[RMDB]
RNA sequence: GGGAACGACUCGAGUAGAGUCGAAAACUACUAAGUCCAUAGAGUUGCGGUACCCCGAGACUAGCGGCAUCUUCAGCGAAAGGAAAUCCGAGACGGGAGGCAGCACUUCUGAAACGUCCCCUCCUGGCACGGUAGCUGAUUCGGUACACGCGGGCGCAGCUUAAUGGCUGUUCGCAGCCAUUAAGCUAAAAGAAACAACAACAACAAC
Reactivity to DMS in 0.01 (KOAc 150mM, MgCl2 10mM, bicine 150mM(pH8.5), 24C), signal-to-noise 1, nucleotides 027 to 156: c010u010a110c050u000a070a070g000u010c050c040a250u000a170g000a170g000u000u000g000c030g030g040u020a070c040c030c000c000g020a190g010a070c050u010a090g030c100g030g000c060a120u000c060u010u010c020a080g020c010g000a120a200a210g000g030a090a050a140u000c010c020g010a040g010a080c040g030g020g000a050g000g010c040a090g000c150a050c050u000u020c080u030g020a100a080a100c090g010u000c030c050c020c000u010c010c010u010g030g000c000a040c010g000g000u000a100g000c000u010g000a030u010u020c060g040g010u010a050c020a040c090g010c070g050g000g000c050g010c120
Reactivity to 2A3 in 0.01 (KOAc 150mM, MgCl2 10mM, bicine 150mM(pH8.5), 24C), signal-to-noise 2, nucleotides 027 to 156: c070u190a050c040u120a140a040g050u010c010c010a110u170a140g080a050g000u080u150g040c020g020g010u060a040c020c010c020c080g040a040g060a130c180u160a090g160c050g020g000c060a050u040c040u070u020c010a020g000c030g120a220a050a030g130g020a020a100a040u020c000c000g010a040g010a070c010g020g000g000a000g020g000c030a030g040c070a040c080u210u130c090u190g100a110a130a060c120g060u060c000c030c010c000u020c000c010u000g010g000c070a010c080g000g000u010a000g000c010u030g000a030u090u040c040g000g020u040a040c210a060c080g000c070g000g010g000c030g020c010